[RMDB]
RNA sequence: GGGAACGACUCGAGUAGAGUCGAAAAAGCGAUGAUACGUCAUCGCAACGAUUGCCUGAUCGUAAAACAGGAGACGGCCGUGGCCGCGACGACGUAAAAAAGCGUAACGUGGUCUACGGACCACGAAAAAAGCGCGGAACGUUCGCGUUCCGCGCAAGAGGAAGUAUCUGUUCGCAGAUACUUCCUCAAAAGAAACAACAACAACAAC
Reactivity to 2A3 in 0.01 (KOAc 150mM, MgCl2 10mM, bicine 150mM(pH8.5), 24C), signal-to-noise 2, nucleotides 027 to 156: a000g000c000g010a000u010g000a000u030a080c240g090u000c000a000u000c010g030c010a000a010c000g000a010u030u070g010c000c000u000g010a020u010c040g140u210a030a000a030a000c000a030g000g020a010g080a050c140g000g000c010c000g000u040g020g030c000c020g020c020g010a020c070g000a000c000g010u060a050a170a060a110a070a020g000c020g010u030a090a030c000g010u000g000g000u000c040u060a020c030g030g050a020c000c000a040c060g090a090a010a050a040a020a010g000c010g030c000g010g000a000a010c010g000u050u050c160g010c000g070u000u000c000c040g020c000g000c010a000a000
Description:
The data come from the RNA Mapping Database (RMDB), library M2RFPK. An RNA of 207 nucleotides, treated with 2A3 and read out base by base. For 2A3, 1,715 sequencing reads were counted. The RNA was probed in 150 mM KOAc, 10 mM MgCl2 and 150 mM bicine (pH 8.5) at 24 C.